The data come from the RNA Mapping Database (RMDB), library TTRDEL. Chemical mapping of a 177-nucleotide RNA with DMS and 2A3. For 2A3, 5,950 sequencing reads were counted. For DMS the reverse transcriptase was MarathonRT. The reactions ran in a buffer of 150 mM KOAc, 10 mM MgCl2 and 150 mM bicine (pH 8.5), at 24 C.
RNA sequence: GGGAACGACUCGAGUAGAGUCGAAAAGAUAUGGACGAUGCUCGAUAAGUCGGGUUCGGAAACGAACCGCGACUUUUGACGAGCUAAGUCCUAAGUCAAAACGGAUGUGGGUUCGCCCACAUCCGAACAUUAUUGACGCGUUCGCGCGUCAAUAAUGAAAAGAAACAACAACAACAAC
Reactivity to DMS in 0.01 (KOAc 150mM, MgCl2 10mM, bicine 150mM(pH8.5), 24C), signal-to-noise 3, nucleotides 027 to 126: g010a010u000a200u000g010g010a010c010g000a270u020g000c010u000c000g020a140u010a010a000g010u000c000g020g000g000u020u000c010g000g020a050a050a120c000g010a010a000c000c030g010c010g020a010c000u000u000u000u000g010a210c110g010a010g000c000u020a110a300g010u000c000c000u000a020a090g020u010c030a070a060a110a260c010g000g000a010u000g020u000g000g000g010u000u020c280g040c000c000c000a010c000a000u000c000c000g010a010a060
Reactivity to 2A3 in 0.01 (KOAc 150mM, MgCl2 10mM, bicine 150mM(pH8.5), 24C), signal-to-noise 2, nucleotides 027 to 126: g030a010u050a030u060g010g000a000c020g030a040u300g000c000u000c040g150a200u080a300a000g010u010c000g020g000g000u000u000c000g000g000a000a010a030c010g000a000a010c010c020g080c010g030a000c000u020u030u070u260g190a050c010g000a000g010c000u010a020a000g000u000c000c000u010a000a000g020u000c000a000a040a070a060c030g000g010a000u010g000u000g000g010g090u060u100c300g090c060c000c000a000c000a000u000c000c010g000a010a000